[RMDB]
RNA sequence: GGGAACGACUCGAGUAGAGUCGAAAAGGGGUCUCGAGACAUGUCUCGCAGAUAGACAUGCUCUGAAGCCUCCACGGAGCAACAGCUGUAGAGACAACAGCUCGAGACGGAGGCACCCAAACUCAUGGGCUCAGUCUUCGGACUGAGCCCAUGAGAAGUAAGCUAACUAGUUCGCUAGUUAGCUUACAAAAGAAACAACAACAACAAC
Reactivity to DMS in 0.01 (KOAc 150mM, MgCl2 10mM, bicine 150mM(pH8.5), 24C), signal-to-noise 1, nucleotides 027 to 156: g000g020g040g070u000c030u010c010g010a070g050a060c050a190u030g010u000c000u000c010g000c050a100g040a180u010a090g030a170c000a200u000g000c000u000c000u010g000a010a140g010c010c050u040c010c040a300c040g000g010a080g010c040a110a240c110a090g030c020u020g000u000a100g070a090g000a060c040a130a080c100a100g010c010u000c000g030a140g000a060c040g010g000a050g090g040c050a180c000c000c020a120a090a190c000u000c020a000u000g010g010g000c000u010c040a030g000u000c000u000u020c300g040g090a050c010u030g020a020g000c000c010c000a000u000g000a000g020a040a180
Reactivity to 2A3 in 0.01 (KOAc 150mM, MgCl2 10mM, bicine 150mM(pH8.5), 24C), signal-to-noise 1, nucleotides 027 to 156: g050g010g070g010u010c020u000c000g030a030g010a050c130a130u120g010u000c000u000c000g000c000a000g030a120u230a040g130a090c070a050u100g000c010u010c000u000g070a060a010g020c000c000u010c000c020a010c020g000g010a000g000c000a010a230c050a260g060c010u020g000u140a130g030a010g000a000c040a120a040c060a130g000c000u000c000g000a010g000a000c000g000g000a010g000g010c000a040c000c000c000a030a010a010c000u000c010a000u000g000g000g000c000u000c000a000g000u000c000u050u210c290g030g000a000c000u010g000a000g020c000c020c020a000u000g000a000g010a000a000
Conditions: 150 mM KOAc, 10 mM MgCl2 and 150 mM bicine (pH 8.5), 24 C. Chemical mapping of a 207-nucleotide RNA with DMS and 2A3. It was measured as part of the RMDB library RNAMAK.